An RNA of 177 nucleotides, treated with DMS and 2A3 and read out base by base. 2A3 adducts were read by reverse transcription with SuperScript II with manganese. DMS adducts were read by reverse transcription with MarathonRT. For 2A3, 32,114 sequencing reads were counted.
[RMDB]
RNA sequence: GGGAACGACUCGAGUAGAGUCGAAAAACAGUUAUGCUUUGGCAACACUUUCGCUCUAAGUGGUGUGAGGAUGUGUAUCAUCAGGGUUUUAACAAACGGCAAAGGCAGGAGCUUAAAUUCAGGAAGGCUAUUUACAUGUAUUCGUACAUGUAAAUAGAAAAGAAACAACAACAACAAC
Reactivity to DMS in 0.01 (KOAc 150mM, MgCl2 10mM, bicine 150mM(pH8.5), 24C), signal-to-noise 9, nucleotides 027 to 126: a080c110a100g010u010u000a080u010g010c030u000u010u000g020g010c070a060a060c080a060c050u000u000u000c090g010c050u000c050u000a060a090g020u000g010g010u000g010u010g010a100g010g010a040u000g010u000g010u000a070u010c050a040u000c050a090g010g000g010u000u000u010u000a040a090c140a040a060a080c120g010g010c050a030a070a100g010g000c040a040g010g010a060g010c050u000u000a030a040a120u000u000c060a060g000g010a080a070g000g010
Reactivity to 2A3 in 0.01 (KOAc 150mM, MgCl2 10mM, bicine 150mM(pH8.5), 24C), signal-to-noise 9, nucleotides 027 to 126: a000c040a030g030u090u080a090u140g020c020u070u080u110g070g000c020a060a010c020a030c040u060u110u100c060g040c050u000c020u080a120a100g050u060g110g020u050g040u050g050a050g050g020a060u060g050u020g020u090a060u130c030a020u020c010a020g070g010g020u030u090u050u090a060a030c030a040a070a010c040g040g000c030a030a030a050g050g000c020a010g020g030a010g000c010u050u110a070a110a070u150u070c020a010g090g040a050a010g080g000